[RMDB]
RNA sequence: GGGAACGACUCGAGUAGAGUCGAAAAGCCGCGGUGGCCGCCCGCUCGUACAGGUAACUUACGAUGUCGGAAACACUUUACCGUGGCCCUAAGCAAUGGAGAUGACACUUCAGGGAGGCUUCACUCUGCAGAGAACUCUCCCCCGUCGCGUGGCGGGCCUGAGCUAAAUGUUCGCAUUUAGCUCAGGAAAAGAAACAACAACAACAAC
Reactivity to 2A3 in 0.01 (KOAc 150mM, MgCl2 10mM, bicine 150mM(pH8.5), 24C), signal-to-noise 2, nucleotides 027 to 156: g000c010c000g000c010g000g000u010g010g060c050c140g060c010c010c010g000c000u000c000g010u000a020c070a230g050g070u130a220a170c050u020u000a000c000g020a020u060g230u270c030g000g010a050a070a000c040a020c040u140u190u130a020c010c010g000u000g000g000c000c000c010u090a120a060g030c010a040a110u120g000g000a000g000a020u050g010a030c000a000c040u010u000c020a010g040g010g020a070g140g040c050u090u080c040a070c010u020c010u030g000c040a000g000a010g010a050a020c000u000c000u000c010c000c000c000c000g030u000c010g030c120g170u250g000g010c000g000g000g000
An RNA of 207 nucleotides, treated with 2A3 and read out base by base. Source: RMDB library ARCHII, as collected in RNAgym. The 2A3 profile rests on 1,302 reads. The reactions ran in a buffer of 150 mM KOAc, 10 mM MgCl2 and 150 mM bicine (pH 8.5), at 24 C.